[RMDB]
RNA sequence: GGGAACGACUCGAGUAGAGUCGAAAAGCGACCUGCGCGAUGCCCACACCACACACUCCGCCCCGCGCCUGGUGAACCGACCCGGGUGGCUAGCAACUAUCAGUUCAAUACACAAAGCCGUCAUCGACUUCUUCCUUCAAUUCGUUGAAGGAAGAAGAAAAGAAACAACAACAACAAC
Reactivity to 2A3 in 0.01 (KOAc 150mM, MgCl2 10mM, bicine 150mM(pH8.5), 24C), signal-to-noise 8, nucleotides 027 to 126: g060c020g030a080c020c020u050g010c040g000c010g050a040u100g020c000c000c000a010c010a020c010c010a020c000a010c000a010c050u030c010c020g030c000c000c000c010g030c000g010c000c000u040g020g000u060g040a080a050c030c020g050a050c020c000c000g010g000g010u020g040g000c010u030a020g030c020a030a070c020u070a050u130c020a020g020u080u070c050a080a040u100a130c050a010c020a070a110a010g010c020c010g030u040c010a060u040c030g050a050
Reactivity to DMS in 0.01 (KOAc 150mM, MgCl2 10mM, bicine 150mM(pH8.5), 24C), signal-to-noise 5, nucleotides 027 to 126: g020c080g010a100c030c020u000g020c040g010c060g030a080u000g020c040c000c030a090c110a110c030c050a040c080a080c070a060c040u010c030c050g000c040c000c000c020g010c080g000c020c000u000g010g040u010g000a110a080c110c040g000a100c070c010c010g020g000g000u010g010g000c030u000a080g010c090a070a080c050u000a060u030c050a060g000u010u020c060a070a050u010a040c130a040c070a050a070a080g010c030c020g010u000c030a060u020c080g010a180
An RNA of 177 nucleotides, treated with 2A3 and DMS and read out base by base. The reactions ran in a buffer of 150 mM KOAc, 10 mM MgCl2 and 150 mM bicine (pH 8.5), at 24 C. For 2A3 the reverse transcriptase was SuperScript II with manganese. DMS adducts were read by reverse transcription with MarathonRT.